[RMDB]
RNA sequence: GGGAACGACUCGAGUAGAGUCGAAAACGGCAAAAAGAUUAUUAUGGUCACAUCUUGAAGCAAUGACAACACGAUCUGAAAUGAAUAGAGAACUAAUAGAGGAGGGAUAUGCUUUAUAUGACGAGCGUAGGUGUCCAAAUUUCGAUUUGGACACCUAAAAAGAAACAACAACAACAAC
Reactivity to DMS in 0.01 (KOAc 150mM, MgCl2 10mM, bicine 150mM(pH8.5), 24C), signal-to-noise 4, nucleotides 027 to 126: c100g000g030c060a020a050a070a090a070g000a080u000u000a060u000u030a060u020g030g010u020c080a040c150a100u020c030u000u030g000a110a140g010c090a050a060u040g000a080c100a030a060c150a040c070g000a080u010c020u010g010a140a110a050u020g010a080a030u000a070g000a120g010a070a030c050u020a060a080u030a050g020a100g000g010a030g000g010g000a060u000a070u010g000c000u020u000u000a100u020a100u020g000a070c130g000a040g000c080g010
Reactivity to 2A3 in 0.01 (KOAc 150mM, MgCl2 10mM, bicine 150mM(pH8.5), 24C), signal-to-noise 4, nucleotides 027 to 126: c020g060g010c060a010a080a010a030a110g010a070u130u100a010u080u070a120u280g170g000u110c030a080c000a020u040c050u080u090g050a020a010g040c030a030a210u150g050a060c030a070a000c050a010c080g060a060u020c000u100g060a020a100a080u090g030a070a030u160a070g050a000g050a040a040c090u160a060a100u170a140g040a030g080g020a020g000g040g010a020u050a020u130g020c000u070u120u020a170u050a070u270g120a050c100g010a000g030c020g010
Notes
An RNA of 177 nucleotides, treated with DMS and 2A3 and read out base by base. The RNA was probed in 150 mM KOAc, 10 mM MgCl2 and 150 mM bicine (pH 8.5) at 24 C. 2A3 adducts were read by reverse transcription with SuperScript II with manganese. The data come from the RNA Mapping Database (RMDB), library OK1LIB.